[RMDB]
RNA sequence: GGGAACGACUCGAGUAGAGUCGAAAAUUCUUCCGGAACUUCGAUAUUGAUGACAGCAUCAAUGUUUCUGUCAAGCUCAGACAUAAUAUUAUUUAAUGCCUCAGCUUGCUCGAUUGUUCUUGGGAAGGUCCAUCCUCAAUUUCGAUUGAGGAUGGACAAAAGAAACAACAACAACAAC
Reactivity to 2A3 in 0.01 (KOAc 150mM, MgCl2 10mM, bicine 150mM(pH8.5), 24C), signal-to-noise 2, nucleotides 027 to 126: u070u020c000u020u000c010c010g020g000a010a000c010u050u040c010g010a020u010a000u150u050g020a020u010g070a060c100a180g250c020a200u020c020a000a040u040g040u020u130u080c100u110g150u140c010a000a000g000c000u020c030a010g020a020c010a030u040a020a060u110a110u300u110a130u150u250u150a160a030u030g020c000c000u000c000a000g000c000u000u000g000c020u010c010g050a090u040u140g000u000u000c000u070u170g120g020g010a000a010g040
Reactivity to DMS in 0.01 (KOAc 150mM, MgCl2 10mM, bicine 150mM(pH8.5), 24C), signal-to-noise 1, nucleotides 027 to 126: u000u020c000u000u000c000c020g020g000a040a010c010u000u010c020g020a040u010a040u000u000g000a010u010g010a220c300a260g010c040a020u000c030a030a010u000g000u010u010u010c120u010g000u020c010a010a010g010c020u000c210a010g000a040c000a020u000a040a070u010a140u000u010a180u020u010u000a030a030u010g010c010c000u000c170a010g010c020u000u000g020c010u000c070g010a050u010u000g010u000u000c000u010u010g040g000g000a040a030g000
An RNA of 177 nucleotides, treated with 2A3 and DMS and read out base by base.
DMS adducts were read by reverse transcription with MarathonRT.
2A3 adducts were read by reverse transcription with SuperScript II with manganese.
It was measured as part of the RMDB library OK2TST.
The reactions ran in a buffer of 150 mM KOAc, 10 mM MgCl2 and 150 mM bicine (pH 8.5), at 24 C.
Reactivities are given for positions 27 through 126.